RNA sequence: GGGAACGACUCGAGUAGAGUCGAAAAACCGGUGUCUCGUGAGGUUCAAACUGAUCUGAGUGACAUCGCCACCGCAACUCCCCCCAGUACUAAAGGCAGACCCACACUUCCACAGGGAGUGAGGUAUCACCCAAGCAUAACCUUCGGACCCAAAGUCACUUCAAUGACUAUUCGUAGUCAUUGAAGUAAAAGAAACAACAACAACAAC
Reactivity to DMS in 0.01 (KOAc 150mM, MgCl2 10mM, bicine 150mM(pH8.5), 24C), signal-to-noise 2, nucleotides 027 to 156: a080c060c000g010g020u010g020u020c000u000c030g010u000g020a140g010g000u000u000c100a080a090a220c110u030g020a110u000c060u010g000a140g010u010g010a090c070a070u000c090g030c120c030a100c030c020g040c050a070a130c070u000c000c010c050c030c000c050a090g050u010a150c070u000a100a080a090g010g010c000a170g020a160c120c000c010a150c010a010c020u000u000c050c030a170c120a160g010g000g000a050g060u000g010a060g000g000u000a070u010c000a060c010c020c020a100a180g000c050a060u000a020a030c000c010u010u000c030g020g000a140c010c010c010a070a050a120g000u000c060
Reactivity to 2A3 in 0.01 (KOAc 150mM, MgCl2 10mM, bicine 150mM(pH8.5), 24C), signal-to-noise 2, nucleotides 027 to 156: a000c010c050g000g000u070g020u000c050u040c100g110u110g020a010g030g040u110u190c110a180a170a170c060u090g010a030u060c050u150g030a020g060u060g010a030c000a040u010c050g030c020c010a080c030c040g060c160a070a200c150u120c000c000c010c000c020c000a000g020u020a020c030u100a020a040a060g010g000c020a010g020a050c000c000c000a050c010a000c040u020u060c010c010a130c080a230g040g010g000a030g010u010g020a050g040g000u040a030u030c030a030c000c020c010a010a000g010c030a030u070a120a060c000c020u020u050c010g000g000a000c000c030c000a020a050a000g050u100c080